[RMDB]
RNA sequence: GGGAACGACUCGAGUAGAGUCGAAAACGGGACGCGAGUUUUUGGCGCAGUUGAGACCGAUCGAUGAUGCUCUAAUGCGCCACGUGGAUAUCCACAAUUCGUUGGAUCAUCCAGGAAUUGUGCAAAAGAUACGUCACGAGUUCGCUCGUGACGUAUCAAAAGAAACAACAACAACAAC
Reactivity to DMS in 0.01 (KOAc 150mM, MgCl2 10mM, bicine 150mM(pH8.5), 24C), signal-to-noise 3, nucleotides 027 to 126: c080g010g010g010a100c090g030c030g000a100g030u020u000u010u000u010g010g010c010g020c000a040g010u000u000g010a040g010a070c070c030g010a150u020c240g020a130u010g010a100u020g000c000u010c020u000a070a080u000g000c020g000c000c000a030c140g020u000g000g000a120u000a070u000c100c010a010c010a080a080u000u000c080g000u000u020g010g010a130u010c170a120u010c000c000a050g000g000a040a030u000u010g000u000g010c180a130a030a080a160
Reactivity to 2A3 in 0.01 (KOAc 150mM, MgCl2 10mM, bicine 150mM(pH8.5), 24C), signal-to-noise 2, nucleotides 027 to 126: c020g000g050g080a020c030g020c020g010a060g060u020u050u080u150u130g000g000c000g000c000a020g030u110u060g030a020g030a060c060c090g020a110u100c130g070a120u210g020a060u200g000c000u000c000u020a080a070u030g000c000g000c010c010a000c000g020u010g000g020a040u030a020u110c030c020a020c000a020a070u120u080c040g070u150u020g000g010a050u130c070a120u020c110c030a010g040g000a040a040u030u050g010u050g020c020a020a000a070a110
Overview
An RNA of 177 nucleotides, treated with DMS and 2A3 and read out base by base. The RNA was probed in 150 mM KOAc, 10 mM MgCl2 and 150 mM bicine (pH 8.5) at 24 C. Source: RMDB library OK2TRN, as collected in RNAgym. DMS adducts were read by reverse transcription with MarathonRT. The 2A3 profile rests on 2,165 reads.